This 177-nucleotide RNA was probed chemically with DMS and 2A3. For 2A3 the reverse transcriptase was SuperScript II with manganese. DMS adducts were read by reverse transcription with MarathonRT.
RNA sequence: GGGAACGACUCGAGUAGAGUCGAAAACACCUCUUGGCCCUCCCUGCUAGGAGACAUGCUGGCUGAUGCCAUCAACUGCUUGGGAUUCACCUGGGUGAGUAGCAACGGCUGUAACUACUCGCAAUGGGGUAAUGCCUAGAUUCGUCUAGGCAUUACCAAAAGAAACAACAACAACAAC
Reactivity to DMS in 0.01 (KOAc 150mM, MgCl2 10mM, bicine 150mM(pH8.5), 24C), signal-to-noise 3, nucleotides 027 to 126: c170a130c080c020u000c010u000u000g000g000c000c040c040u000c020c010c030u010g010c050u000a060g030g000a060g010a120c140a070u000g010c100u000g000g020c010u010g000a140u030g010c000c040a030u000c060a100a100c080u000g000c050u000u000g000g000g000a120u000u000c090a130c040c020u000g020g020g020u010g010a030g020u000a020g010c090a070a130c070g000g010c050u000g000u000a170a120c010u010a010c010u000c020g010c130a090a110u010g010g000
Reactivity to 2A3 in 0.01 (KOAc 150mM, MgCl2 10mM, bicine 150mM(pH8.5), 24C), signal-to-noise 3, nucleotides 027 to 126: c040a030c010c010u040c000u030u070g050g000c020c010c030u010c000c000c010u010g000c020u030a010g000g040a030g040a020c040a080u140g040c020u040g030g000c010u090g070a090u200g050c020c000a060u050c040a020a080c050u060g050c010u050u080g030g000g020a040u080u110c040a070c050c020u070g060g080g000u050g020a030g000u000a010g000c090a060a040c030g100g000c040u060g000u050a030a050c010u030a010c010u010c020g010c020a050a170u160g090g000